[RMDB]
RNA sequence: GGGAACGACUCGAGUAGAGUCGAAAAAUGUUCGGGCCUAUCGUUCCCAUAUGGAUGACCUGCGUCUAUACAGUUGCAAUGUGCUUUAGACACUUCUUCUGGGUUUUAGCUUAUUUUAGUAAGAAACAAGGCACCAAGUUCGCUUGGUGCAAAAGAAACAACAACAACAAC
Reactivity to 2A3 in 0.01 (KOAc 150mM, MgCl2 10mM, bicine 150mM(pH8.5), 24C), signal-to-noise 4, nucleotides 027 to 129: a000u100g080u000u020c030g030g010g000c020c040u130a110u040c000g040u000u000c010c000c000a000u000a040u090g170g000a070u050g010a070c010c020u090g060c020g010u000c030u020a170u020a040c020a110g050u120u050g050c080a110a120u120g020u020g040c040u090u010u070a010g000a050c020a000c020u000u000c000u030u020c000u000g060g050g050u030u010u000u170a000g020c000u050u000a100u120u170u000u000a070g020u050a070a020g070a030a090a030c030a020a020g050
Reactivity to DMS in 0.01 (KOAc 150mM, MgCl2 10mM, bicine 150mM(pH8.5), 24C), signal-to-noise 3, nucleotides 027 to 129: a170u060g000u010u030c040g000g000g000c280c070u020a110u020c060g000u000u010c000c030c000a210u000a050u000g020g010a100u050g040a120c060c070u030g010c050g030u020c000u000a000u040a000c090a070g010u020u020g000c150a060a100u000g000u000g020c000u010u010u040a130g010a170c010a100c040u010u030c040u040u010c040u000g000g030g020u010u000u000u000a070g030c040u030u040a020u030u040u060u050a080g050u000a020a090g010a070a050a040c090a030a070g020